This 207-nucleotide RNA was probed chemically with DMS and 2A3. The reactions ran in a buffer of 150 mM KOAc, 10 mM MgCl2 and 150 mM bicine (pH 8.5), at 24 C. Source: RMDB library RSTRND, as collected in RNAgym. 2A3 is a SHAPE reagent: it acylates the 2'-hydroxyl of flexible nucleotides of all four kinds. Reactivities are given for positions 27 through 156. The DMS profile rests on 2,092 reads.

[RMDB]
RNA sequence: GGGAACGACUCGAGUAGAGUCGAAAAAACAGCGUCGGUAGAUGAAGCUUCCCUGACCGGAGGCUGAAAUGGAUCAUCCGCAGCCAAGUCCCUCCUCAGACGCUUUCAAGGUGUCUGGCGGGAUGCUGUUCACAGACUAAAUGAUGGUGGGUCCGCUUACUAGUCUUGGGUUCGCCCAAGACUAGUAAAAAGAAACAACAACAACAAC
Reactivity to DMS in 0.01 (KOAc 150mM, MgCl2 10mM, bicine 150mM(pH8.5), 24C), signal-to-noise 1, nucleotides 027 to 156: a010a060c030a050g010c010g070u010c010g010g020u010a080g050a150u000g010a160a040g030c010u000u000c010c000c030u030g010a170c160c040g030g010a010g000g020c020u000g020a020a070a140u000g020g040a130u010c100a060u010c000c040g120c040a070g000c000c150a060a210g000u010c000c030c010u010c050c040u010c010a000g030a000c000g040c000u000u000u000c300a150a080g000g030u010g020u010c020u010g010g040c150g000g000g000a040u000g020c000u010g000u000u000c060a130c100a090g010a170c030u000a070a080a060u030g020a080u000g010g010u000g020g020g000u000c000c010g010c300u010
Reactivity to 2A3 in 0.01 (KOAc 150mM, MgCl2 10mM, bicine 150mM(pH8.5), 24C), signal-to-noise 1, nucleotides 027 to 156: a000a050c070a020g030c030g030u060c030g050g040u080a080g080a170u100g140a130a030g020c050u000u010c010c020c030u030g120a010c000c040g000g000a030g030g000c040u040g040a040a070a110u160g000g030a030u080c020a020u010c020c010g070c000a010g000c040c000a070a000g040u000c000c000c000u030c000c010u010c010a000g000a010c000g080c000u060u190u200c090a170a060g010g000u000g010u030c000u010g000g000c020g020g010g000a010u060g000c000u030g020u090u090c010a070c000a060g160a060c010u150a120a100a030u100g120a030u090g030g080u040g080g030g000u010c000c020g000c020u000